Notes:
The record gives the reactivity of an RNA of 177 nucleotides to 2A3 and DMS. The 2A3 profile rests on 4,091 reads. The RNA was probed in 150 mM KOAc, 10 mM MgCl2 and 150 mM bicine (pH 8.5) at 24 C. For 2A3 the reverse transcriptase was SuperScript II with manganese. DMS adducts were read by reverse transcription with MarathonRT.

RNA sequence: GGGAACGACUCGAGUAGAGUCGAAAAGAUAUGGAGCAGCAGCGAGGAUCUAUGGUCACUCGGAAACGAGUGAGCCAUAGGGAGCUGCAAUGCUCCUAAGUCAAACUUGGCACUUCGGUGCCAAGAACUACGACGUUAUGUUCGCAUAACGUCGUAGAAAAGAAACAACAACAACAAC
Reactivity to 2A3 in 0.01 (KOAc 150mM, MgCl2 10mM, bicine 150mM(pH8.5), 24C), signal-to-noise 1, nucleotides 027 to 126: g000a010u130a040u130g000g000a020g050c050a020g000c000a010g020c080g050a260g100g000a020u000c010u020a000u010g000g000u040c000a000c000u000c000g010g070a020a080a060c000g010a000g020u010g020a030g150c020c000a000u000a000g000g000g000a000g000c000u000g030c000a030a000u010g000c000u000c000c000u040a120a030g020u030c020a010a100a150c010u020u000g000g000c000a000c010u060u020c300g150g000u020g000c050c010a010a000g000a000a000
Reactivity to DMS in 0.01 (KOAc 150mM, MgCl2 10mM, bicine 150mM(pH8.5), 24C), signal-to-noise 3, nucleotides 027 to 126: g000a020u000a300u010g010g000a000g040c000a100g000c020a000g010c000g010a110g030g000a060u020c010u000a010u010g000g010u000c000a010c000u000c000g000g000a080a110a200c000g010a010g020u000g000a070g000c000c000a000u000a000g010g000g000a040g050c000u000g000c040a020a030u010g030c000u030c000c000u000a010a090g000u000c020a110a160a300c010u000u000g000g020c010a000c000u000u020c190g010g000u000g010c010c000a000a010g000a110a270